The record gives the reactivity of an RNA of 177 nucleotides to DMS and 2A3. For DMS, 1,056 sequencing reads were counted. The reactions ran in a buffer of 150 mM KOAc, 10 mM MgCl2 and 150 mM bicine (pH 8.5), at 24 C.

RNA sequence: GGGAACGACUCGAGUAGAGUCGAAAAUGCUGAGCUUUCGAGCUCAGCAGAGGCAAGCAUGCAGCGCAACGAGACAAGACGAGCAUAAGAUCGAGCAUGCUACAAUACGGCACUUCGGUGCCGUAAACUUGGAUUGGAAGUUCGCUUCCAAUCCAAGAAAAGAAACAACAACAACAAC
Reactivity to DMS in 0.01 (KOAc 150mM, MgCl2 10mM, bicine 150mM(pH8.5), 24C), signal-to-noise 2, nucleotides 027 to 126: u000g030c000u000g020a040g010c000u000u010u030c130g030a010g020c000u000c000a020g040c010a000g000a130g040g020c070a130a090g000c030a020u000g000c020a140g050c070g000c130a040a090c050g000a110g020a100c160a110a120g000a130c060g000a180g020c040a090u030a070a090g020a070u010c040g010a110g030c020a040u000g000c040u000a060c120a070a120u000a000c010g020g000c000a040c010u000u000c100g050g010u010g000c000c010g000u000a000a020a030
Reactivity to 2A3 in 0.01 (KOAc 150mM, MgCl2 10mM, bicine 150mM(pH8.5), 24C), signal-to-noise 1, nucleotides 027 to 126: u040g000c000u000g000a000g000c000u100u000u210c210g080a000g000c000u000c020a000g010c000a000g010a020g010g000c060a000a040g010c020a000u030g020c020a040g120c040g000c100a060a090c070g070a050g090a120c090a080a050g030a060c050g010a030g040c060a140u090a240a010g090a150u110c040g000a010g000c010a000u000g050c000u020a000c010a050a000u020a070c000g000g000c000a000c000u040u070c150g020g010u000g000c000c000g000u000a000a020a000